Conditions: 150 mM KOAc, 10 mM MgCl2 and 150 mM bicine (pH 8.5), 24 C.
Structure probing data (2A3 and DMS) for a 207-nucleotide construct.
The data come from the RNA Mapping Database (RMDB), library M2RFPK.
RNA sequence: GGGAACGACUCGAGUAGAGUCGAAAAAAGCCUCUGUUCGAAAUCAUCGGGAGUGAUCCAGAUGACGGUCCUGCCAUGAGACCGCAACGAAAGCAUGUCGCAUCGAAUGGACUCGGGGAGUCGGCAGUGUAGUGGGGAUGGUUCGCCAUCCCCACAAUCAUACUCCUAAGUUCGCUUAGGAGUAUGAAAAAGAAACAACAACAACAAC
Reactivity to 2A3 in 0.01 (KOAc 150mM, MgCl2 10mM, bicine 150mM(pH8.5), 24C), signal-to-noise 2, nucleotides 027 to 156: a020a000g090c030c000u030c050u050g060u040u120c030g010a070a060a110u020c020a010u020c030g000g020g000a010g030u110g040a090u000c010c000a020g010a040u000g000a040c030g000g000u010c000c000u040g140c000c020a090u060g010a020g010a090c010c050g000c060a090a050c090g110a110a030a050g060c050a060u170g060u130c050g000c030a040u040c040g020a040a030u050g000g020a030c020u030c110g000g000g020g000a030g060u020c000g020g050c040a040g060u050g100u300a180g000u020g010g010g000g020a000u020g010g070u090u110c180g030c030c000a000u000c000c000c000c000a000c000a010a000
Reactivity to DMS in 0.01 (KOAc 150mM, MgCl2 10mM, bicine 150mM(pH8.5), 24C), signal-to-noise 2, nucleotides 027 to 156: a080a110g040c050c030u000c010u000g030u010u010c010g010a080a130a090u010c010a010u000c000g010g020g040a050g000u020g020a270u000c000c000a050g010a040u000g000a070c010g020g010u010c030c010u000g060c110c120a100u010g000a110g010a030c010c070g000c040a090a300c030g010a070a060a140g020c060a080u010g010u000c050g030c040a130u000c040g020a060a270u000g010g000a070c020u010c050g020g000g000g000a120g020u000c040g000g000c030a150g020u010g080u000a100g040u000g020g000g040g010a020u000g020g000u000u010c100g010c020c010a030u000c000c000c000c000a000c000a000a110